RNA sequence: GGGAACGACUCGAGUAGAGUCGAAAACACAUUAUGGCUACUGAAGCAUCUAAUUAUGCCCAGUAUCGUGUAGUUCGUGCUACCAUUCGAUACCGCCCCUUGGUGCCGAAUGCCGUUGGUGGGUAUGAGGAACCAGGAUAUUCGUAUCCUGGUUCCUAAAAGAAACAACAACAACAAC
Reactivity to DMS in 0.01 (KOAc 150mM, MgCl2 10mM, bicine 150mM(pH8.5), 24C), signal-to-noise 2, nucleotides 027 to 126: c030a100c100a090u020u010a030u020g000g010c060u000a120c120u000g000a150a150g000c040a030u010c150u010a100a110u020u020a060u000g000c010c070c010a050g000u000a010u000c040g000u010g040u000a010g010u000u000c140g010u010g010c030u000a000c030c110a050u000u000c070g000a070u010a060c070c070g010c080c040c060c040u010u000g020g010u000g000c020c020g000a040a010u000g000c020c020g000u000u000g010g000u000g000g000g000u010a030u010g000
Reactivity to 2A3 in 0.01 (KOAc 150mM, MgCl2 10mM, bicine 150mM(pH8.5), 24C), signal-to-noise 2, nucleotides 027 to 126: c030a000c000a020u030u130a110u300g030g000c000u070a010c050u150g020a030a000g000c010a050u020c030u170a150a070u220u140a030u080g010c040c000c000a080g130u010a010u020c150g010u120g020u090a030g050u060u140c100g100u200g050c010u050a020c000c020a080u050u080c020g050a030u090a150c020c020g140c030c010c000c030u000u060g020g010u020g050c020c010g000a010a000u040g000c000c020g000u030u000g030g050u060g020g000g010u030a040u070g030